Structure probing data (2A3 and DMS) for a 177-nucleotide construct. DMS adducts were read by reverse transcription with MarathonRT. The RNA was probed in 150 mM KOAc, 10 mM MgCl2 and 150 mM bicine (pH 8.5) at 24 C.

RNA sequence: GGGAACGACUCGAGUAGAGUCGAAAAGCUUUCCGUUUCGACGGAAAGCAAAGGCAAGUACAUGAGAGAUCUAAGAUCACUCAGAAAAGCCGUACUAAAGAAAAAUCAAUCUGUUCGCAGAUUGAAACGUGUUUAACUCAUUCGUGAGUUAAACACGAAAAGAAACAACAACAACAAC
Reactivity to 2A3 in 0.01 (KOAc 150mM, MgCl2 10mM, bicine 150mM(pH8.5), 24C), signal-to-noise 1, nucleotides 027 to 126: g000c000u010u000u000c000c010g000u010u000u150c200g030a020c000g000g000a000a010a010g000c000a030a040a020g000g000c000a060a000g100u070a060c120a170u060g000a000g010a000g010a000u000c020u130a220a020g000a030u000c000a010c020u000c000a010g070a000a070a010a020g000c030c040g000u040a020c050u180a090a120a080g070a050a100a070a010a050u040c000a000a000u010c030u010g040u000u070c280g000c060a010g000a000u040u000g020a020a000a010
Reactivity to DMS in 0.01 (KOAc 150mM, MgCl2 10mM, bicine 150mM(pH8.5), 24C), signal-to-noise 1, nucleotides 027 to 126: g000c000u000u010u010c000c010g000u000u000u040c100g010a020c000g010g010a010a000a000g020c010a000a010a040g000g000c030a030a060g020u030a080c080a160u000g010a010g000a010g010a000u000c010u000a100a200g030a050u000c000a120c000u000c000a040g000a060a110a260a240g000c010c010g020u010a160c050u000a070a080a110g000a050a030a080a110a050u010c000a000a000u000c000u000g000u010u010c220g020c000a000g000a010u000u000g000a010a060a080
It was measured as part of the RMDB library M2PK50.